[RMDB]
RNA sequence: GGGAACGACUCGAGUAGAGUCGAAAACGUGGGUGCUACCAGGGGUCGCGGUGACGGCUGGCAUGAUGUGGUCGCACAUCAUCGCAGGUGCGGUGGUAGCCGUCCUGGGCUUCUACUUCGGGAUGCGGGAGGAUAGAUCCUUCGGGAUCUAUCCUCCAAAAGAAACAACAACAACAAC
Reactivity to 2A3 in 0.01 (KOAc 150mM, MgCl2 10mM, bicine 150mM(pH8.5), 24C), signal-to-noise 2, nucleotides 027 to 126: c020g010u060g080g000g000u050g090c000u070a110c030c050a000g000g010g000g000u030c000g000c030g130g010u190g080a010c050g000g000c000u030g060g000c000a030u080g000a020u000g000u020g020g090u290c180g190c080a020c000a000u010c070a020u020c070g000c080a060g130g110u180g160c050g000g050u040g050g070u050a010g000c000c000g000u000c000c020u090g000g000g000c000u070u030c010u020a050c000u000u140c060g010g000g060a030u090g030c040g030